This 177-nucleotide RNA was probed chemically with 2A3 and DMS.
Conditions: 150 mM KOAc, 10 mM MgCl2 and 150 mM bicine (pH 8.5), 24 C.
Source: RMDB library VIROID, as collected in RNAgym.
RNA sequence: GGGAACGACUCGAGUAGAGUCGAAAAUUCUCAGAAUCCAGCGAGAGGCGUGGAGAGAGGGCCGCGGUGCUCUGGAGUAGAGGCUCUGCUUCAGAACACCAUCGAUCGUCCCUUCUUCUUUACCUUCCGAUUCAUACAACUUCGGUUGUAUGAAUCGAAAAGAAACAACAACAACAAC
Reactivity to 2A3 in 0.01 (KOAc 150mM, MgCl2 10mM, bicine 150mM(pH8.5), 24C), signal-to-noise 1, nucleotides 027 to 126: u000u000c030u030c030a000g120a050a040u100c060c090a010g090c090g090a190g000a020g150g010c090g040u080g010g010a000g010a020g000a000g000g000g020c060c010g070c070g020g000u010g010c000u000c000u010g010g000a000g010u030a000g030a090g190g030c160u050c010u150g010c000u010u010c000a000g010a000a030c030a000c010c010a020u040c070g070a110u120c000g010u050c010c000c000u100u050c030u130u050c000u060u070u050a050c000c000u050u080c020
Reactivity to DMS in 0.01 (KOAc 150mM, MgCl2 10mM, bicine 150mM(pH8.5), 24C), signal-to-noise 1, nucleotides 027 to 126: u000u000c010u000c010a150g000a150a090u010c110c080a090g010c100g000a090g010a030g010g000c170g000u000g010g000a040g000a050g000a040g000g000g000c090c050g000c230g010g020u000g010c020u000c010u030g010g000a020g000u000a020g000a110g000g020c190u020c000u000g000c010u000u000c020a000g000a010a010c030a000c020c000a060u000c230g000a150u000c050g000u000c000c000c000u010u000c020u000u000c000u000u000u000a030c020c010u000u000c030